[RMDB]
RNA sequence: GGGAACGACUCGAGUAGAGUCGAAAAUGAUCUCGCUGUAGAAAACGAAACUAUCUAGACUACUUUUACUCAAACUUGCUGACAGCGGCCUUGCUUUCUUUCAACUUGACAAUCUGCUCAACAGCACCAUGACUCACCCAUUCGUGGGUGAGUCAUGAAAAGAAACAACAACAACAAC
Reactivity to 2A3 in 0.01 (KOAc 150mM, MgCl2 10mM, bicine 150mM(pH8.5), 24C), signal-to-noise 4, nucleotides 027 to 126: u090g010a010u030c010u030c070g010c090u050g060u090a000g090a110a090a020a000c120g100a050a070a100c080u080a060u180c020u050a040g060a110c030u060a030c000u070u120u140u130a090c030u030c030a050a150a140c040u040u080g030c040u030g080a060c030a040g010c000g010g000c020c000u030u140g030c010u030u140u000c030u020u130u030c070a070a090c020u030u080g020a010c000a020a080u030c020u060g020c000u030c080a110a040c020a120g000c010a020c000
Reactivity to DMS in 0.01 (KOAc 150mM, MgCl2 10mM, bicine 150mM(pH8.5), 24C), signal-to-noise 1, nucleotides 027 to 126: u020g000a050u000c090u000c030g000c120u000g020u060a080g000a080a000a010a140c160g070a050a130a070c150u010a010u000c090u000a140g020a120c060u010a070c080u080u000u020u000a040c000u000c000a170a080a030c100u070u020g000c030u000g000a020c020a070g040c100g000g040c000c090u000u000g000c000u000u000u000c020u010u000u000c050a000a170c030u000u050g000a070c120a070a020u000c020u000g000c000u020c050a020a060c290a000g000c020a030c190